This 177-nucleotide RNA was probed chemically with 2A3 and DMS. In probing experiments dimethyl sulfate is read out at A N1 and C N3, which are open when not base-paired. Reactivities are given for positions 27 through 126.

[RMDB]
RNA sequence: GGGAACGACUCGAGUAGAGUCGAAAAGAUCAGUUCCACUAGUGAGGGAUUCGUGCUGCGUUGGCCUCAUUAUUAUUCGCUUUACGGACGAGCGUGUAACAUCACGGCUGGAACUGAAUAAGGUGGCUCUCUGACUACGUUUCGACGUGGUCGGGGGAAAAGAAACAACAACAACAAC
Reactivity to 2A3 in 0.01 (KOAc 150mM, MgCl2 10mM, bicine 150mM(pH8.5), 24C), signal-to-noise 9, nucleotides 027 to 126: g070a080u030c000a000g000u000u000c000c000a010c020u050a050g010u010g020a010g030g090g030a110u060u080c030g020u080g100c100u090g040c040g040u060u070g080g100c000c020u020c050a010u030u070a040u040u030a040u030u070c020g000c000u060u060u110a090c090g090g050a040c040g040a020g010c020g000u020g010u030a050a040c030a070u100c040a020c040g050g010c110u020g000g000a000a000c000u000g000a000a010u120a050a020g110g020u080g040g000c010
Reactivity to DMS in 0.01 (KOAc 150mM, MgCl2 10mM, bicine 150mM(pH8.5), 24C), signal-to-noise 9, nucleotides 027 to 126: g010a090u000c010a010g000u000u000c000c000a040c050u010a070g020u000g000a020g000g000g010a160u020u010c040g020u010g020c100u030g010c040g010u010u010g000g000c010c020u000c030a030u010u020a070u010u010a030u010u000c050g010c020u000u000u020a140c090g010g010a070c090g000a030g000c010g010u000g010u000a040a060c120a110u020c160a080c130g000g010c210u000g000g010a010a010c000u000g000a030a060u020a070a070g000g010u010g000g010c070